[RMDB]
RNA sequence: GGGAACGACUCGAGUAGAGUCGAAAAACGAGGUACGCCUCGAAAAUAUGACCGGUGUCAUAGCCUCUAGCACACAGAGGUCGCGUGGGUUCAACUCCUCCCCUUUUCCGAGGGUAUCGGAAACCAAAAAACACAAUUUGGUUCGCCAAAUUGUGAAGAAUUGACAUGCGUUCGCGCAUGUCAAUUCAAAAGAAACAACAACAACAAC
Reactivity to 2A3 in 0.01 (KOAc 150mM, MgCl2 10mM, bicine 150mM(pH8.5), 24C), signal-to-noise 2, nucleotides 027 to 156: a020c010g000a000g000g010u040a040c190g030c010c000u010c010g070a100a020a010a040u120a040u080g020a030c010c050g160g020u170g040u120c010a030u020a030g000c010c010u060c030u040a110g090c130a060c010a010c020a130g010a000g040g000u000c010g000c010g040u130g050g030g010u070u060c060a050a050c040u010c030c000u020c010c010c000c020u000u110u070u000c000c000g000a010g030g000g000u100a010u010c000g020g000a010a030a000c030c060a050a010a030a090a070a000c020a000c000a000a000u000u000u010g000g000u010u050c100g000c040c000a000a000a000u010u000g000u000g000a010a030